[RMDB]
RNA sequence: GGGAACGACUCGAGUAGAGUCGAAAAGAGGCAAUAAAGAGUUUUAAACAGGAGUGAGCCACUCAGAAUUGCAUUUAAAACAAAUUAUUUGGAAAUCACUCUGUGGAGACUAGAUUAAAUCUAAAGACAAUUGGUCUAGACAGGGGAACCAUUUAGACCUAUAAUGCCUGUUCGCAGGCAUUAUAGGAAAAGAAACAACAACAACAAC
Reactivity to 2A3 in 0.01 (KOAc 150mM, MgCl2 10mM, bicine 150mM(pH8.5), 24C), signal-to-noise 2, nucleotides 027 to 156: g110a030g000g030c010a010a050u050a060a230a040g030a010g030u060u100u130u300a080a130a020c090a060g110g040a090g000u140g100a030g100c000c020a020c030u070c010a030g160a050a100u080u050g000c010a000u170u120u120a110a100a060a060c020a030a050a030u200u070a100u040u140u060g020g020a030a130a150u120c080a120c020u000c000u000g010u030g070g090a070g000a000c010u020a080g030a070u090u120a040a110a150u180c090u140a170a060a080g070a010c030a060a040u070u070g000g000u000c000u010a030g050a130c010a010g000g000g040g000a000a020c000c000a000u030u070u190a040g020a030